[RMDB]
RNA sequence: GGGAACGACUCGAGUAGAGUCGAAAACUGAGCAUUCUUGUAUGCCAGGGAAUUACUGAGGAAGUUCCGCCCUGUAGUAUUGAUGUCGGUAAAUUUUUUCUUCGGUAAGACUUCCCCUCUACAAAAACUAUGCGUGACUAUUCGUAGUCACGCAUAGAAAAGAAACAACAACAACAAC
Reactivity to DMS in 0.01 (KOAc 150mM, MgCl2 10mM, bicine 150mM(pH8.5), 24C), signal-to-noise 1, nucleotides 027 to 126: c010u000g000a190g010c010a000u000u020c220u010u010g010u010a000u000g000c020c000a040g000g000g000a070a120u000u000a010c010u000g010a010g010g010a030a010g010u000u000c010c000g000c070c090c070u010g000u000a070g010u020a140u010u010g000a050u000g010u000c010g010g000u000a020a030a070u020u000u010u000u000u000c000u010u000c030g010g020u000a000a030g000a190c090u000u000c020c000c010c300u020c110u020a020c070a070a030a040a140a150
Reactivity to 2A3 in 0.01 (KOAc 150mM, MgCl2 10mM, bicine 150mM(pH8.5), 24C), signal-to-noise 1, nucleotides 027 to 126: c010u000g020a020g030c000a010u050u090c110u120u210g060u160a010u020g000c000c000a010g000g000g050a010a070u020u000a000c010u010g000a000g010g010a050a000g020u050u000c000c000g030c020c010c030u170g060u250a120g080u060a230u090u180g160a140u090g130u150c020g040g000u130a040a100a150u170u040u030u000u000u020c000u010u010c000g050g000u000a050a010g010a040c050u050u040c000c020c000c000u000c040u040a070c040a000a050a090a020a000